[RMDB]
RNA sequence: GGGAACGACUCGAGUAGAGUCGAAAAGGGCUGCAGUGCGCUAUGCCGAUCGGGUGUCCGCACUAAGUUCGGCAUCAAUAUGGUGACCUCCCGGGAGCGGGGGACCACCAGGUUGCCUAAGGAGGGGUGAACCGGCCCAGGUCGGAAACGGAGCAGGCAGAUUCAGUUAGUUCGCUAACUGAAUCUGAAAAGAAACAACAACAACAAC
Reactivity to 2A3 in 0.01 (KOAc 150mM, MgCl2 10mM, bicine 150mM(pH8.5), 24C), signal-to-noise 2, nucleotides 027 to 156: g020g000g000c040u050g010c040a010g030u040g090c020g020c050u060a030u120g030c010c000g060a100u050c060g020g030g000u040g070u040c040c070g060c020a030c020u070a070a060g070u040u060c040g000g000c000a000u020c030a070a120u120a110u180g000g020u010g030a110c000c000u040c010c020c010g020g070g060a140g080c090g010g000g010g010g020a070c150c000a000c000c000a000g000g000u020u030g010c020c010u060a070a050g070g030a020g020g060g000g000u070g050a060a060c060c000g020g000c000c000c020a020g040g000u000c020g020g000a040a040a040c040g000g010a020g030c020a000g080g030
Reactivity to DMS in 0.01 (KOAc 150mM, MgCl2 10mM, bicine 150mM(pH8.5), 24C), signal-to-noise 1, nucleotides 027 to 156: g000g020g020c020u000g060c050a120g010u010g010c010g010c110u000a070u020g030c010c000g010a050u000c050g000g000g000u000g010u010c100c070g040c040a040c010u000a020a180g050u000u010c090g030g020c070a070u000c030a090a070u000a110u020g000g020u000g000a050c000c000u000c000c000c000g000g020g010a180g040c030g020g000g040g020g030a010c000c020a010c000c000a030g000g030u000u000g000c040c050u000a120a090g020g010a280g000g050g040g030u010g000a030a050c090c100g020g000c020c000c050a050g080g010u000c030g040g000a050a080a080c020g040g000a130g020c060a060g030g010
Structure probing data (2A3 and DMS) for a 207-nucleotide construct.
As a SHAPE reagent, 2A3 marks flexible, mostly unpaired nucleotides at the ribose 2'-OH.
It was measured as part of the RMDB library ARCHII.